An RNA of 177 nucleotides, treated with 2A3 and DMS and read out base by base. The data come from the RNA Mapping Database (RMDB), library M2PK50.

RNA sequence: GGGAACGACUCGAGUAGAGUCGAAAAGUAACAAUCUUCGGAUUGUUACAUAGCCUCCAGGUGGAAACCAAAACCUUAGAAUGAAAAGAGAAAGAAAAAGAAGUGACUACCUGUUCGCAGGUAGUAAGAAAGAAUUACCAUUCGUGGUAAUUCUUUCAAAAGAAACAACAACAACAAC
Reactivity to 2A3 in 0.01 (KOAc 150mM, MgCl2 10mM, bicine 150mM(pH8.5), 24C), signal-to-noise 3, nucleotides 027 to 126: g000u000a000a000c000a000a010u000c020u030u070c140g040g000a000u000u020g010u000u000a020c000a000u000a020g060c010c020u030c050c030a040g030g050u070g050g080a110a110a140c050c010a040a040a040a090c030c000u070u070a060g060a160a100u130g050a090a070a070a000g050a010g060a040a120a020g040a010a080a040a000a010g080a070a000g090u080g080a020c000u000a000c000c000u020g030u020u070c260g000c050a000g020g000u010a000g000u010a010a000
Reactivity to DMS in 0.01 (KOAc 150mM, MgCl2 10mM, bicine 150mM(pH8.5), 24C), signal-to-noise 3, nucleotides 027 to 126: g010u000a010a010c010a020a000u000c000u000u010c180g040g010a000u000u000g000u000u000a000c000a070u000a120g010c030c010u000c090c090a090g010g020u010g020g010a070a090a130c030c030a090a060a090a060c080c060u010u000a070g020a080a050u000g000a040a060a060a090g000a040g000a040a030a060g000a060a060a050a050a050g010a050a080g010u000g010a060c000u000a000c000c000u000g010u000u010c170g020c000a000g000g000u000a000g000u000a040a080
Reactivities are given for positions 27 through 126. For 2A3, 2,747 sequencing reads were counted. The reactions ran in a buffer of 150 mM KOAc, 10 mM MgCl2 and 150 mM bicine (pH 8.5), at 24 C. The DMS profile rests on 2,663 reads.